[RMDB]
RNA sequence: GGGAACGACUCGAGUAGAGUCGAAAACUUUCUUCCAUUCACCCACUGCUCGAGAACCUCUUCUCUGCUCCCGCGGUUCUUCCUCGAUUCGGACCGGCUCAUCUCGACAAGAGGCGGCAGUCCUCAGUACUCUUACUCUUUUCUGUAAAGAGGAGACCCUUGAGAUUCUGUUCGCAGAAUCUCAAGGAAAAGAAACAACAACAACAAC
Reactivity to 2A3 in 0.01 (KOAc 150mM, MgCl2 10mM, bicine 150mM(pH8.5), 24C), signal-to-noise 1, nucleotides 027 to 156: c000u130u160u060c040u130u100c060c000a100u100u000c040a080c020c040c010a060c050u060g010c000u020c050g030a020g020a020a030c000c030u040c010u160u000c030u020c040u060g060c060u020c040c020c000g000c050g000g000u080u000c020u120u000c000c020u020c000g070a050u060u080c020g000g040a020c070c010g050g000c010u010c010a090u050c010u020c030g040a040c040a130a020g020a040g060g000c020g080g070c030a010g080u070c000c000u050c020a030g020u030a110c040u050c010u080u060a230c000u090c000u000u190u060u000c080u110g240u230a000a090a000g010a010g000g050a030g050a010c000